[RMDB]
RNA sequence: GGGAACGACUCGAGUAGAGUCGAAAAGACUCAUGGGAAGUCGGCGUGACUCUCGACUAAUGUGGAUGUCCGCUUUCUGGCUCCAGGUAAACAGUGUUGGUGCGGAGGUUGGUUAGUGGCGCGCCAACAUAGUCGGGAUUUUCGAAUCCCGACUAUGAAAAGAAACAACAACAACAAC
Reactivity to DMS in 0.01 (KOAc 150mM, MgCl2 10mM, bicine 150mM(pH8.5), 24C), signal-to-noise 7, nucleotides 027 to 126: g000a100c020u000c030a140u020g000g010g000a120a040g010u000c020g000g000c060g000u030g010a060c040u010c070u020c020g030a160c200u040a140a120u060g030u030g010g000a070u020g010u020c010c020g000c060u010u020u020c050u030g000g000c020u010c000c020a070g000g010u010a060a070a120c160a070g010u010g010u000u000g000g020u000g000c010g010g000a090g010g010u010u010g000g000u010u020a070g020u010g010g010c020g010c010g000c000c000a010a040
Reactivity to 2A3 in 0.01 (KOAc 150mM, MgCl2 10mM, bicine 150mM(pH8.5), 24C), signal-to-noise 3, nucleotides 027 to 126: g040a000c000u020c020a090u080g010g000g080a100a010g010u000c010g000g040c010g060u150g010a080c010u020c030u040c080g080a040c090u150a080a150u230g010u070g000g030a030u090g040u040c000c020g000c000u040u050u050c040u020g020g010c020u020c020c000a010g040g040u100a070a090a020c030a030g010u000g010u030u020g010g010u010g000c020g010g010a110g000g040u130u080g040g000u050u090a040g000u030g060g010c000g000c010g000c000c000a000a000
This 177-nucleotide RNA was probed chemically with DMS and 2A3. For 2A3, 2,066 sequencing reads were counted. The data come from the RNA Mapping Database (RMDB), library OK1LIB. Values cover nucleotides 27 to 126. The DMS profile rests on 23,007 reads. Conditions: 150 mM KOAc, 10 mM MgCl2 and 150 mM bicine (pH 8.5), 24 C.